[RMDB]
RNA sequence: GGGAACGACUCGAGUAGAGUCGAAAACUGGCUAAACGCCUAGCCAAUGAGAUACGGCCUGGUGGUAAGGUUGGGCUGGUCCCACGGGAGGCAGUGGAUCAUUGGGAUGGAUAUCACGGAGAGGAAGAAGCUCCAGACAUUUCGAUGUCUGGAGCUUAAAAGAAACAACAACAACAAC
Reactivity to 2A3 in 0.01 (KOAc 150mM, MgCl2 10mM, bicine 150mM(pH8.5), 24C), signal-to-noise 2, nucleotides 027 to 126: c010u000g000g010c000u110a040a050a040c060g000c000c070u070a050g010c010c000a030a030u060g000a080g100a120u200a030c050g100g000c060c010u140g040g020u300g030g030u130a110a080g080g000u170u090g050g000g110c000u190g000g060u300c050c000c000a000c010g260g000g000a060g000g000c000a020g100u030g040g060a010u020c050a010u020u080g000g040g040a020u010g000g000a040u040a010u080c000a000c040g010g010a040g000a000g240g000a000a000g020
Reactivity to DMS in 0.01 (KOAc 150mM, MgCl2 10mM, bicine 150mM(pH8.5), 24C), signal-to-noise 1, nucleotides 027 to 126: c010u000g010g000c040u000a030a040a110c200g000c010c000u070a180g000c010c000a020a010u000g000a060g020a300u030a100c050g000g060c010c000u000g030g020u000g000g020u060a060a100g030g040u030u000g010g090g000c000u010g030g000u070c080c010c010a020c000g020g000g050a060g000g000c010a000g030u000g020g000a150u000c000a030u020u000g000g000g000a080u000g000g040a040u000a030u000c080a110c020g000g020a040g000a110g010g000a160a130g000
Source: RMDB library OK1LIB, as collected in RNAgym. This 177-nucleotide RNA was probed chemically with 2A3 and DMS. 2A3 adducts were read by reverse transcription with SuperScript II with manganese. The reactions ran in a buffer of 150 mM KOAc, 10 mM MgCl2 and 150 mM bicine (pH 8.5), at 24 C. For DMS, 1,402 sequencing reads were counted. Values cover nucleotides 27 to 126. For 2A3, 640 sequencing reads were counted.